The data come from the RNA Mapping Database (RMDB), library ARCHII. The record gives the reactivity of an RNA of 207 nucleotides to 2A3. For 2A3, 498 sequencing reads were counted.

RNA sequence: GGGAACGACUCGAGUAGAGUCGAAAAUCAAACAAAUGUAAAUGCUAGUGAGAUUAUAAUCCUAGUCUUGUUAUACGAGACUGCUUUAUGGUCUUGCGAGACCCUCAAACUGCGGGAAAGUCUUAAAAACACGCUACACUAAGCUAUGUUUCGAAAGCCUCAUAUGCAAGUUCGCUUGCAUAUGAGGAAAAGAAACAACAACAACAAC
Reactivity to 2A3 in 0.01 (KOAc 150mM, MgCl2 10mM, bicine 150mM(pH8.5), 24C), signal-to-noise 1, nucleotides 027 to 156: u000c000a020a080a080c040a050a100a050u190g050u200a000a100a110u080g010c000u010a030g000u020g020a000g000a000u000u010a010u010a040a010u040c000c120u060a000g000u000c000u050u020g110u150u190a200u100a120c050g010a000g010a000c000u000g000c020u000u000u000a010u040g010g000u010c000u010u030g020c000g010a020g020a030c000c010c000u010c020a150a230a260c090u060g030c060g010g030g000a090a060a000g060u020c020u000u080a090a070a010a000a000c100a040c050g010c030u140a040c170a010c210u160a000a080g040c010u040a030u140g010u000u020u000c020g050a100a000a030g040